[RMDB]
RNA sequence: GGGAACGACUCGAGUAGAGUCGAAAAGGCUACGUGCUGGUGCCGGUGGAGCCGACUGAAGCGAUGUUGGAGGCUGGUGGAGAUGUAGAGCAGAUCCACAUUGAGUGGGGUGUGGACCCGUAUGUUGAGAACACUUCAGAGGUAUGGAGAGCGAUGCCCUUUCCGUACAUUUCGAUGUACGGAAAGGAAAAGAAACAACAACAACAAC
Reactivity to 2A3 in 0.01 (KOAc 150mM, MgCl2 10mM, bicine 150mM(pH8.5), 24C), signal-to-noise 3, nucleotides 027 to 156: g030g000c020u090a000c090g020u050g050c030u030g040g030u030g010c000c010g000g030u050g000g060a040g000c010c050g020a010c020u080g010a100a000g030c030g070a050u060g010u120u020g030g040a040g000g050c020u000g020g040u010g010g020a020g010a030u070g020u130a050g020a010g060c050a020g020a050u000c010c010a010c020a030u060u180g030a020g020u070g010g020g000g000u010g020u020g010g030a020c040c000c000g050u070a060u110g030u000u060g030a070g010a080a030c060a010c060u050u040c030a030g030a010g090g000u040a040u110g070g010a030g000a000g050c050g040a050u090g020c000
Reactivity to DMS in 0.01 (KOAc 150mM, MgCl2 10mM, bicine 150mM(pH8.5), 24C), signal-to-noise 1, nucleotides 027 to 156: g020g020c010u010a060c080g040u040g010c020u010g000g010u000g010c020c000g030g040u000g010g010a130g050c040c020g000a100c050u000g020a050a090g000c030g020a070u020g040u010u010g010g010a130g040g000c020u030g030g030u020g000g040a010g030a130u000g020u000a070g010a120g050c050a130g000a120u000c020c010a050c020a180u000u000g010a130g020u000g000g020g010g040u010g020u010g030g000a040c030c020c050g060u000a040u020g000u010u000g000a170g000a060a070c040a070c040u000u010c040a080g020a130g000g000u000a110u010g000g000a080g020a080g020c030g000a130u000g010c060

This 207-nucleotide RNA was probed chemically with 2A3 and DMS.
The DMS profile rests on 2,930 reads.
High 2A3 reactivity points to a flexible backbone, as in loops and unpaired stretches.
Source: RMDB library OK3TST, as collected in RNAgym.
2A3 adducts were read by reverse transcription with SuperScript II with manganese.
Values cover nucleotides 27 to 156.
DMS adducts were read by reverse transcription with MarathonRT.